[RMDB]
The data come from the RNA Mapping Database (RMDB), library M2PK50. The record gives the reactivity of an RNA of 177 nucleotides to 2A3 and DMS. For DMS, 1,363 sequencing reads were counted. DMS adducts were read by reverse transcription with MarathonRT. The 2A3 profile rests on 4,557 reads. Conditions: 150 mM KOAc, 10 mM MgCl2 and 150 mM bicine (pH 8.5), 24 C.
RNA sequence: GGGAACGACUCGAGUAGAGUCGAAAAUCAUGUUUGUUCGCAAACAUGAAAAGAAAGCACGAAAAUAAAAUAAAAGGGAAGGGAACGUGCACCCACCCAUAUAAACGCACGUGUUCGCACGUGCGAAGUAACCGUAGUAGUUCGCUACUACGGUUACAAAAGAAACAACAACAACAAC
Reactivity to 2A3 in 0.01 (KOAc 150mM, MgCl2 10mM, bicine 150mM(pH8.5), 24C), signal-to-noise 3, nucleotides 027 to 126: u020c000a000u000g010u020u010u000g040u010u050c160g000c100a010a020a000c000a000u000g000a020a030a000a030g070a040a050a000g000c000a010c020g140a100a220a120a060u210a020a060a070a030u200a050a120a060a050g010g010g020a080a110g030g000g010a090a040c000g000u000g000c010a040c000c000c000a000c000c000c050a050u120a020u050a130a090a010c000g000c000a000c020g010u020g010u020u040c210g030c080a000c000g000u000g000c000g000a030a000
Reactivity to DMS in 0.01 (KOAc 150mM, MgCl2 10mM, bicine 150mM(pH8.5), 24C), signal-to-noise 2, nucleotides 027 to 126: u000c000a020u010g010u020u010u020g010u000u000c170g080c010a000a020a000c000a010u020g000a000a070a100a170g010a070a050a070g020c010a010c000g000a190a090a070a090u010a080a020a050a080u020a040a120a090a050g000g000g000a140a100g010g000g030a080a070c030g030u000g000c000a300c010c000c000a130c000c010c040a090u000a130u010a070a070a150c010g020c000a000c010g020u000g010u000u000c170g030c000a010c000g020u010g000c000g020a020a030